[RMDB]
RNA sequence: GGGAACGACUCGAGUAGAGUCGAAAACCGUCGGUUGGCACUUUUCGUCCUUUCUGGCCAUUUGUGAGUCCCGAAGGAGAAGGACGUCAGGGACUCAACGACGGAAAGGGGUUCCUUCGGGAACCCCCACGUAACAUAUGUUCGCAUAUGUUACGUGAAAAGAAACAACAACAACAAC
Reactivity to 2A3 in 0.01 (KOAc 150mM, MgCl2 10mM, bicine 150mM(pH8.5), 24C), signal-to-noise 7, nucleotides 027 to 126: c000c000g000u000c000g000g040u000u010g000g020c030a050c160u110u110u180u170c080g050u010c020c030u100u270u150c140u140g080g000c010c000a010u010u010u020g010u000g000a000g000u010c010c000c020g020a120a060g130g090a120g040a120a100g050g020a020c020g010u030c030a020g000g000g010a000c000u000c010a000a000c000g000a000c000g000g020a100a020a010g000g000g000g010u000u010c010c000u010u060c190g040g020g000a000a000c000c000c010c000
Reactivity to DMS in 0.01 (KOAc 150mM, MgCl2 10mM, bicine 150mM(pH8.5), 24C), signal-to-noise 7, nucleotides 027 to 126: c010c000g010u000c000g000g010u000u010g020g030c040a220c190u010u010u010u010c050g010u000c000c010u000u010u010c160u010g010g020c010c000a020u010u000u000g010u000g010a030g010u000c000c000c020g000a160a170g010g000a160g010a090a070g010g010a050c050g000u000c100a210g010g000g000a020c010u000c000a010a010c010g000a020c010g000g000a020a050a090g010g000g000g000u000u000c000c000u000u010c180g020g000g000a010a000c010c000c000c000
This 177-nucleotide RNA was probed chemically with 2A3 and DMS. The reactions ran in a buffer of 150 mM KOAc, 10 mM MgCl2 and 150 mM bicine (pH 8.5), at 24 C. 2A3 adducts were read by reverse transcription with SuperScript II with manganese. Source: RMDB library RFMREP, as collected in RNAgym. Values cover nucleotides 27 to 126.